An RNA of 177 nucleotides, treated with DMS and 2A3 and read out base by base. 2A3 adducts were read by reverse transcription with SuperScript II with manganese. Conditions: 150 mM KOAc, 10 mM MgCl2 and 150 mM bicine (pH 8.5), 24 C.
RNA sequence: GGGAACGACUCGAGUAGAGUCGAAAAUGUGGUUAUCACUACAAAGAAUUAGGUUUAGUCAUGAAUAUGGAUGUUAGUCUCCAUAGACAUAGGCUCUCUCUUAAGGAGUUGAUGAUGUAUGCCGCUGCUUUGUAGGUUAGUUCGCUAACCUACAAAGAAAAGAAACAACAACAACAAC
Reactivity to DMS in 0.01 (KOAc 150mM, MgCl2 10mM, bicine 150mM(pH8.5), 24C), signal-to-noise 6, nucleotides 027 to 126: u010g030u000g010g010u000u010a080u010c040a040c030u000a160c040a060a070a070g010a180a130u000u000a030g010g000u000u000u000a030g020u000c010a030u000g000a040a170u000a020u000g000g000a030u010g020u000u010a160g010u010c080u000c010c000a010u000a010g000a200c020a020u000a070g020g000c010u000c090u000c060u000c020u000u000a040a050g000g000a170g010u000u000g010a100u010g010a050u000g010u000a070u000g000c010c000g020c060u000g010
Reactivity to 2A3 in 0.01 (KOAc 150mM, MgCl2 10mM, bicine 150mM(pH8.5), 24C), signal-to-noise 5, nucleotides 027 to 126: u080g010u020g010g010u050u090a030u090c020a010c020u120a060c040a010a180a020g070a030a060u060u040a030g000g010u020u040u070a010g000u000c010a020u000g000a030a020u030a000u020g000g030a010u080g070u170u100a100g060u070c010u000c020c000a000u000a010g000a010c000a010u040a090g000g000c000u000c000u000c010u000c000u030u030a040a010g040g000a060g040u050u030g040a140u010g000a010u030g040u100a040u160g020c000c010g010c020u020g020

The 2A3 profile rests on 7,021 reads. DMS adducts were read by reverse transcription with MarathonRT.